[RMDB]
The record gives the reactivity of an RNA of 177 nucleotides to 2A3 and DMS. For DMS, 12,280 sequencing reads were counted. For DMS the reverse transcriptase was MarathonRT. Reactivities are rounded to 0.1 and cut off at 0 and 3. 2A3 adducts were read by reverse transcription with SuperScript II with manganese.
RNA sequence: GGGAACGACUCGAGUAGAGUCGAAAAGAAGAAAAAGAAACACGCGAACCUGGCAAAGGCCGCAGAGCCAGGAGCGUGAUAAACGCAGAAAGAUCUGAGGCCAAAAGCGAGAAGAACUCGCAAGAAACACUACCUAAUGAUUCGUCAUUAGGUAGUGAAAAGAAACAACAACAACAAC
Reactivity to 2A3 in 0.01 (KOAc 150mM, MgCl2 10mM, bicine 150mM(pH8.5), 24C), signal-to-noise 9, nucleotides 027 to 126: g060a050a030g090a020a120a020a010a010g150a050a170a010c010a000c010g020c010g030a080a120c000c000u000g010g000c020a030a200a270g020g000c010c010g020c010a010g000a000g000c000c000a000g000g010a010g000c000g000u000g010a000u060a000a110a010c080g030c140a030g170a150a090a000g090a050u010c010u020g000a020g020g000c000c010a000a080a030a020g000c010g010a010g020a220a030g030a090a090c000u000c000g000c010a000a020g030a010a050a000
Reactivity to DMS in 0.01 (KOAc 150mM, MgCl2 10mM, bicine 150mM(pH8.5), 24C), signal-to-noise 5, nucleotides 027 to 126: g000a110a120g020a070a040a070a060a080g010a130a100a080c010a030c030g000c020g010a110a070c010c000u000g000g030c000a050a100a100g000g030c000c020g010c020a010g010a040g010c000c000a000g010g000a050g000c000g020u000g000a050u040a040a040a110c120g000c150a070g010a090a070a050g000a060u000c000u000g000a070g020g020c000c030a090a070a070a160g010c000g020a020g000a140a170g010a090a070c010u000c000g010c000a090a090g000a140a060a130